RNA sequence: GGGAACGACUCGAGUAGAGUCGAAAAAGAAUUCCAUCUCUUGGAAUCACUUUCAAGCAGAUGUCUAGCUUGGAUUCAGCCAAUGGGAUUCAAUAAAGAGAGAUUUAAAAGUCAGAAGAAAACAAGAAUUCCAGUACAGCUGUAGCAAGAUGCGCAAGCAGUGGUAAUACUUCGGUAUUACCACUGCAAAAGAAACAACAACAACAAC
Reactivity to 2A3 in 0.01 (KOAc 150mM, MgCl2 10mM, bicine 150mM(pH8.5), 24C), signal-to-noise 2, nucleotides 027 to 156: a000g100a080a080u070u020c000c000a010u010c000u000c000u050u010g000g030a040a040u120c050a180c160u060u100u040c020a020a010g000c050a040g090a050u060g040u070c060u070a040g040c010u020u030g020g100a240u210u030c000a000g010c000c010a030a090u010g000g000g030a000u010u010c020a010a090u200a180a240a020g150a010g020a000g010a010u110u220u240a090a100a000a000g080u050c070a020g070a210a020g060a040a300a020a020c060a040a100g000a010a010u000u010c020c000a010g020u060a090c030a020g010c010u020g000u040a000g050c000a000a010g050a060u130g020c070g080c090a100a090
Reactivity to DMS in 0.01 (KOAc 150mM, MgCl2 10mM, bicine 150mM(pH8.5), 24C), signal-to-noise 1, nucleotides 027 to 156: a000g030a100a110u000u000c030c000a020u000c070u010c070u000u030g000g010a030a110u000c160a060c300u020u030u000c020a040a110g100c000a040g010a170u010g000u000c070u010a200g040c000u040u000g020g000a300u000u000c030a030g120c140c070a050a180u000g000g010g030a000u000u000c060a010a210u000a070a110a160g010a170g000a240g030a160u000u000u000a060a050a150a300g030u000c030a260g000a200a110g000a130a160a070a120c070a070a130g000a090a060u000u010c000c030a040g070u000a060c100a010g030c060u000g000u000a090g030c030a040a140g000a170u000g000c000g030c070a090a300